An RNA of 207 nucleotides, treated with 2A3 and read out base by base. 2A3 adducts were read by reverse transcription with SuperScript II with manganese. Conditions: 150 mM KOAc, 10 mM MgCl2 and 150 mM bicine (pH 8.5), 24 C.

[RMDB]
RNA sequence: GGGAACGACUCGAGUAGAGUCGAAAAGGACUGCGCAGUCCGGCAACAUCAGCAGAGAGCCCGCUAUACGUGACGGAUUGGCUGAAGAGUACAGAAAUAUUGAGCCUCCUGCAAGAGGCAGCCAAGCAAAACGUACGUGAGUUCGCUCACGUACGAAGUGCACUUGGAAGUUCGCUUCCAAGUGCACAAAAGAAACAACAACAACAAC
Reactivity to 2A3 in 0.01 (KOAc 150mM, MgCl2 10mM, bicine 150mM(pH8.5), 24C), signal-to-noise 2, nucleotides 027 to 156: g000g040a020c020u090g130c150g040c120a020g030u000c000c000g010g010c000a070a120c060a050u060c030a010g000c060a000g060a000g000a020g100c020c030c000g000c090u090a130u090a150c140g050u080g100a050c020g090g030a100u040u000g030g000c000u040g000a070a000g010a000g050u070a060c060a000g150a050a100a020u250a070u140u110g070a070g000c010c000u060c030c100u070g080c030a150a010g000a000g020g000c000a000g030c000c000a080a010g020c040a000a020a000a060c000g000u000a000c000g000u000g000a010g000u030u130c140g000c170u000c000a000c070g000u020a010c000g000a020a000